[RMDB]
RNA sequence: GGGAACGACUCGAGUAGAGUCGAAAAGGGGCCGUCAUGGCCCAGCCUGCACCCUUGAGCCUCGACACCCUCCUGUCUGGCUUAGCUUGUUGUGUGCGGUUUUGGACCACAUAGGGGAGGAAGGGAGCAAGUGUCACGGUUUCGACCGUGACACUUGAAAAGAAACAACAACAACAAC
Reactivity to DMS in 0.01 (KOAc 150mM, MgCl2 10mM, bicine 150mM(pH8.5), 24C), signal-to-noise 2, nucleotides 027 to 126: g020g020g000g020c020c000g030u020c250a120u000g010g010c010c010c020a020g000c060c000u000g000c040a130c010c000c020u000u010g010a060g000c020c010u000c290g000a040c050a080c040c000c040u000c030c050u000g020u000c030u010g000g010c020u000u000a070g010c160u020u000g020u010u000g030u000g030u010g020c060g000g000u010u000u010u000g050g010a080c010c010a090c110a130u010a070g000g000g000g000a110g010g010a110a080g020g000g010a130g010